RNA sequence: GGGAACGACUCGAGUAGAGUCGAAAACACUAGUUCGCUAGUGCUAAGGAUAUGGACGUGAACUACAAAGUAGAGACGCGAAGAACUAACAUCGGAAACGAUGUUAGGGAGCGUCGAUCUUUGCACGUCCUAAGUCACGUGACCCAUUCGUGGGUAAGCUCUGGACAAAGUUCGCUUUGUCCAGAGCAAAAGAAACAACAACAACAAC
Reactivity to 2A3 in 0.01 (KOAc 150mM, MgCl2 10mM, bicine 150mM(pH8.5), 24C), signal-to-noise 1, nucleotides 027 to 156: c030a030c020u040a010g000u090u130c300g040c170u010a000g000u050g060c030u110a130a050g140g000a000u020a010u130g010g000a000c020g040u000g050a150a000c000u200a040c150a030a020a040g040u220a160g070a000g040a050c000g000c030g100a300a010g000a080a000c000u000a000a000c000a000u000c000g010g000a010a020a000c000g000a000u020g000u000u000a000g000g000g030a000g010c000g000u000c020g000a010u000c040u030u000u020g020c000a000c000g000u010c000c000u000a010a000g000u000c000a020c210g200u210g100a070c000c000c030a000u070u150c260g070u040g000g010g000u060a080a000